[RMDB]
Structure probing data (DMS) for a 177-nucleotide construct.
Reactivities are rounded to 0.1 and cut off at 0 and 3.
It was measured as part of the RMDB library OK2TRN.
For DMS, 2,870 sequencing reads were counted.
Conditions: 150 mM KOAc, 10 mM MgCl2 and 150 mM bicine (pH 8.5), 24 C.
RNA sequence: GGGAACGACUCGAGUAGAGUCGAAAAGAUGCGCUCAAUGGUGUUGCGGAGCCAUUCGGUGUCGGUCUGGGAGGCACGCUGUAGGCGCAUCCGCGACACUCGCAGUGGAAGCAUCUGCAGCGAGAUCCGGGCUUAUAAUCUUCGGAUUAUAAGCCCGAAAAGAAACAACAACAACAAC
Reactivity to DMS in 0.01 (KOAc 150mM, MgCl2 10mM, bicine 150mM(pH8.5), 24C), signal-to-noise 3, nucleotides 027 to 126: g000a040u000g020c010g010c050u000c090a110a110u010g010g020u000g000u000u000g020c000g000g000a180g020c010c010a180u000u000c060g020g030u000g000u000c030g020g000u000c040u000g000g000g000a210g010g000c000a040c010g000c020u020g010u000a080g000g010c070g000c080a150u000c000c000g030c030g000a030c030a020c020u000c120g040c140a050g040u000g010g000a130a180g010c040a030u000c000u000g000c070a080g010c050g010a130g000a070u010c090